[RMDB]
RNA sequence: GGGAACGACUCGAGUAGAGUCGAAAAGGGAUGGCUGAAGCGGUGGUUUACCUGGCGACGACGAAGGCGGGAUCACCUCCAACGUCAACCGAGUUCGAUGCUGAUAGCUUGGCUCGAGGCCACGCGGAAGGCGAAGUGAUUUCGAUCACUUCGCCUUAAAAGAAACAACAACAACAAC
Reactivity to DMS in 0.01 (KOAc 150mM, MgCl2 10mM, bicine 150mM(pH8.5), 24C), signal-to-noise 2, nucleotides 027 to 126: g020g000g000a120u020g040g010c050u010g000a250a150g000c070g000g010u060g030g000u010u000u000a070c100c030u000g050g040c090g000a140c180g000a050c070g020a060a130g000g000c170g010g000g010a100u030c130a070c010c060u000c060c060a040a300c060g020u030c030a090a230c060c050g000a040g010u000u020c040g020a060u080g020c000u020g000a170u000a090g000c040u000u060g000g000c000u000c030g030a080g000g000c000c060a050c110g010c060g010g000
Reactivity to 2A3 in 0.01 (KOAc 150mM, MgCl2 10mM, bicine 150mM(pH8.5), 24C), signal-to-noise 2, nucleotides 027 to 126: g070g030g010a130u070g020g000c040u020g040a060a010g000c000g040g040u040g010g000u030u050u040a070c000c020u030g020g000c010g000a060c070g000a000c020g010a060a020g030g040c020g000g030g000a070u080c010a040c040c010u000c030c040a070a000c020g000u040c020a010a040c020c000g000a010g040u040u160c020g050a040u160g000c000u100g080a130u070a080g050c020u050u140g040g000c010u030c030g060a080g000g080c000c020a000c020g050c030g120g050